RNA sequence: GGGAACGACUCGAGUAGAGUCGAAAAGAUAUGGAUCCGUGCCCAGCGAUGAAAUACCUCGGAAACGAGGUAUGGAGCUGGCACGGGAUCCUAAGUCAAAACGGGUGUAGCUUCGGCUACACCCGAAGCAGAUGUAGUUGUUCGCAACUACAUCUGCAAAAGAAACAACAACAACAAC
Reactivity to DMS in 0.01 (KOAc 150mM, MgCl2 10mM, bicine 150mM(pH8.5), 24C), signal-to-noise 1, nucleotides 027 to 126: g010a010u040a230u010g000g010a100u000c000c010g000u000g000c200c030c300a090g000c000g040a120u000g030a130a150a010u000a000c000c020u000c000g010g000a050a050a060c010g010a010g010g000u010a000u000g000g010a020g080c010u010g000g000c010a000c020g020g010g010a010u010c000c030u000a010a070g000u000c000a120a020a140a230c040g000g010g000u000g050u000a000g020c010u000u010c250g020g000c040u040a000c000a010c000c020c000g000a000a060
The record gives the reactivity of an RNA of 177 nucleotides to DMS. The DMS profile rests on 963 reads. The reactions ran in a buffer of 150 mM KOAc, 10 mM MgCl2 and 150 mM bicine (pH 8.5), at 24 C.